[RMDB]
RNA sequence: GGGAACGACUCGAGUAGAGUCGAAAAAUCUGCUGGCCCGCGGGCCCGGCGUCCUCGUUCACCAACGCGAUUGGGAAAUGCCGCAAAUUGGUCAUGGGGUUUAGGAUGCCGCCCAGAUAGAGCGCGGCCUUUGGAGGCCUUUCGAGGCCUCCAAAGGAAAAGAAACAACAACAACAAC
Reactivity to 2A3 in 0.01 (KOAc 150mM, MgCl2 10mM, bicine 150mM(pH8.5), 24C), signal-to-noise 2, nucleotides 027 to 126: a010u100c060u100g000c030u050g060g000c060c000c000g050c140g020g000g000c050c030c030g030g010c000g050u010c000c000u040c020g110u090u040c020a050c190c020a040a030c020g110c100g300a300u080u090g040g000g000a020a060a020u150g050c030c000g120c110a050a070a050u130u190g060g030u110c090a110u030g010g200g000g000u030u040u150a040g000g000a050u030g000c000c000g020c010c000c000a040g030a050u300a050g070a060g030c070g000c090g030g010
Reactivity to DMS in 0.01 (KOAc 150mM, MgCl2 10mM, bicine 150mM(pH8.5), 24C), signal-to-noise 1, nucleotides 027 to 126: a210u020c040u000g010c070u050g000g000c090c000c000g000c090g050g000g050c100c280c000g010g050c010g020u000c030c000u000c030g040u000u020c040a130c000c050a040a020c050g000c210g010a110u000u010g050g010g010a140a060a050u030g050c030c020g030c030a040a080a210u040u000g030g000u020c140a140u010g000g000g010g000u000u010u000a070g000g000a010u020g000c000c000g000c030c000c000a130g000a070u000a120g000a100g010c060g000c090g010g000

The record gives the reactivity of an RNA of 177 nucleotides to 2A3 and DMS. For 2A3 the reverse transcriptase was SuperScript II with manganese. Conditions: 150 mM KOAc, 10 mM MgCl2 and 150 mM bicine (pH 8.5), 24 C. The DMS profile rests on 1,482 reads. The data come from the RNA Mapping Database (RMDB), library OK1LIB.